Background
An RNA of 207 nucleotides, treated with DMS and 2A3 and read out base by base. For 2A3, 4,669 sequencing reads were counted. The DMS profile rests on 7,043 reads. Conditions: 150 mM KOAc, 10 mM MgCl2 and 150 mM bicine (pH 8.5), 24 C.

RNA sequence: GGGAACGACUCGAGUAGAGUCGAAAACUGUUGACGCCUAAUACGCGUUUGCUCCUGCUCAUGGUGGCGCCUUUUACGGACGUUCUUACUGUGUCAAAGACCACGUACAUUGGUCACCUUCUCACAUUAUACAGGGAAACGAUUGGCAGCAGACACACCAACUAUAGGAGUUCGCUCCUAUAGUUGGAAAAGAAACAACAACAACAAC
Reactivity to DMS in 0.01 (KOAc 150mM, MgCl2 10mM, bicine 150mM(pH8.5), 24C), signal-to-noise 3, nucleotides 027 to 156: c040u010g000u000u000g000a100c010g050c000c010u000a140a150u000a080c180g010c020g000u000u000u000g020c040u000c030c020u000g010c030u000c080a120u010g020g030u000g010g020c030g000c030c010u000u000u000u000a100c110g000g020a140c050g030u000u000c020u000u010a030c050u000g000u000g000u000c020a300a040a060g010a090c010c040a070c060g010u000a050c120a090u000u000g020g020u000c030a080c020c040u000u000c090u010c120a120c080a120u000u000a130u000a090c020a070g020g010g020a060a050a070c040g000a130u000u010g020g030c050a120g040c040a110g010a060c040a050c050a160
Reactivity to 2A3 in 0.01 (KOAc 150mM, MgCl2 10mM, bicine 150mM(pH8.5), 24C), signal-to-noise 6, nucleotides 027 to 156: c040u040g040u050u090g070a050c040g030c000c020u110a140a040u220a190c090g000c000g030u020u020u090g060c080u040c010c010u030g040c050u070c140a100u100g010g000u020g020g030c050g090c020c010u030u060u030u050a050c070g050g060a050c070g090u130u000c020u040u040a090c050u050g050u030g030u110c050a060a030a020g020a030c020c040a040c060g030u050a020c030a130u020u050g030g000u050c010a020c000c000u130u030c060u060c030a130c000a100u110u220a070u170a160c040a010g030g000g020a010a030a020c030g060a080u060u130g030g000c020a040g030c020a020g020a010c010a000c000a000